[RMDB]
Source information:
This 177-nucleotide RNA was probed chemically with DMS and 2A3. For 2A3 the reverse transcriptase was SuperScript II with manganese. For DMS the reverse transcriptase was MarathonRT.
RNA sequence: GGGAACGACUCGAGUAGAGUCGAAAAGAAAACUCAUCCCAAACAAAAAACAGGGUUUCUGAUAACCGGUGCGACAAUAUGCCCUUCCAAGGCACUGACCGGCACGGAGAAAAACUAUAAUGCCAUGCUAAAGUAGGUUGUUCGCAACCUACUUUAGAAAAGAAACAACAACAACAAC
Reactivity to DMS in 0.01 (KOAc 150mM, MgCl2 10mM, bicine 150mM(pH8.5), 24C), signal-to-noise 2, nucleotides 027 to 126: g030a120a070a080a090c150u000c090a110u020c010c000c040a080a120a140c140a020a070a160a070a050a160c170a060g000g020g010u000u000u010c010u050g000a100u000a080a120c020c010g030g020u000g000c210g010a020c180a020a000u010a030u000g000c020c000c030u010u030c250c230a050a080g020g010c000a090c020u000g000a050c040c010g010g000c070a090c190g000g010a050g000a090a020a000a050a070c100u000a050u030a090a060u020g020c080c090a090u010g020
Reactivity to 2A3 in 0.01 (KOAc 150mM, MgCl2 10mM, bicine 150mM(pH8.5), 24C), signal-to-noise 1, nucleotides 027 to 126: g020a000a110a000a070c000u030c020a090u070c050c030c050a080a090a050c030a010a170a030a050a010a000c050a050g090g030g000u020u030u020c040u040g070a150u050a170a030c040c010g000g070u020g000c030g030a000c040a040a040u050a020u130g000c000c000c000u070u060c090c030a010a000g000g000c000a000c020u010g000a000c000c010g000g000c050a000c020g050g000a040g040a040a030a010a000a010c020u040a040u070a290a130u080g030c010c020a010u090g000